[RMDB]
RNA sequence: GGGAACGACUCGAGUAGAGUCGAAAAAUUAUUGAUUCUCGCUCUCUAGGAAUGAAAGGUACAUUUAUCCGUGUACUAAAUGAUAAAUUCCUUGUUGAACUAGAAAAAUUGAAAAAUAACUAAAAAACAUAGGUGGCUGAUUCGUCGGUCGCCUAUGAAAAGAAACAACAACAACAAC
Reactivity to DMS in 0.01 (KOAc 150mM, MgCl2 10mM, bicine 150mM(pH8.5), 24C), signal-to-noise 5, nucleotides 027 to 126: a090u010u000a040u000u000g010a230u010u000c000u000c100g010c030u000c020u000c010u000a010g000g000a030a010u000g000a100a210a170g000g000u000a000c010a020u000u010u020a120u030c300c250g000u000g000u000a010c020u000a020a080a140u000g010a140u010a060a100a040u000u000c000c000u000u000g010u010u000g010a030a040c010u000a040g000a030a050a060a090a080u000u000g000a010a100a080a080a080u010a040a100c060u020a010a060a050a110a060a110
Reactivity to 2A3 in 0.01 (KOAc 150mM, MgCl2 10mM, bicine 150mM(pH8.5), 24C), signal-to-noise 3, nucleotides 027 to 126: a010u150u090a050u040u080g090a030u050u000c000u000c000g000c020u010c000u000c010u000a010g000g050a020a000u030g040a120a020a060g000g000u010a000c010a010u030u100u100a160u060c070c030g000u010g000u030a010c010u030a040a100a100u120g020a010u040a080a100a020u010u010c000c000u010u000g010u020u040g010a020a040c030u020a010g040a070a080a040a070a080u090u140g050a080a090a050a060a090u240a080a020c010u110a100a030a000a300a020a010